[RMDB]
RNA sequence: GGGAACGACUCGAGUAGAGUCGAAAAUUGACUAUUUCAUCAGAAGGGAAUAUACCACCGAUUGACUGCCCAAGCGCAGCCAUUUUACUCAUGGAAUCUUUAAUGACUGAACGUGAAAUGUCAUUAACAUUUAAUAAAUGUUCGCAUUUAUUAAAUGAAAAGAAACAACAACAACAAC
Reactivity to DMS in 0.01 (KOAc 150mM, MgCl2 10mM, bicine 150mM(pH8.5), 24C), signal-to-noise 6, nucleotides 027 to 126: u000u000g000a050c030u000a040u000u000u000c010a030u000c050a060g020a260a160g000g000g010a120a060u010a090u010a140c050c040a050c190c100g000a070u010u000g020a030c020u000g000c000c010c130a100a170g010c130g010c020a030g020c010c000a030u000u000u000u000a100c160u000c100a100u010g010g000a100a090u000c060u010u000u000a050a040u000g000a110c030u000g000a090a090c160g020u000g000a040a050a060u000g000u000c010a010u010u000a040a160
Reactivity to 2A3 in 0.01 (KOAc 150mM, MgCl2 10mM, bicine 150mM(pH8.5), 24C), signal-to-noise 4, nucleotides 027 to 126: u060u030g010a020c030u070a060u030u060u040c020a090u020c010a030g080a130a050g080g010g020a080a030u100a030u050a200c010c040a040c020c050g030a030u010u070g020a030c010u000g020c000c000c050a210a050g050c120g000c080a010g000c000c000a020u110u130u080u080a050c010u030c030a050u040g030g020a060a060u050c040u050u190u070a110a050u060g020a040c020u010g030a100a030c060g060u030g070a050a040a030u050g000u000c000a010u010u020a010a010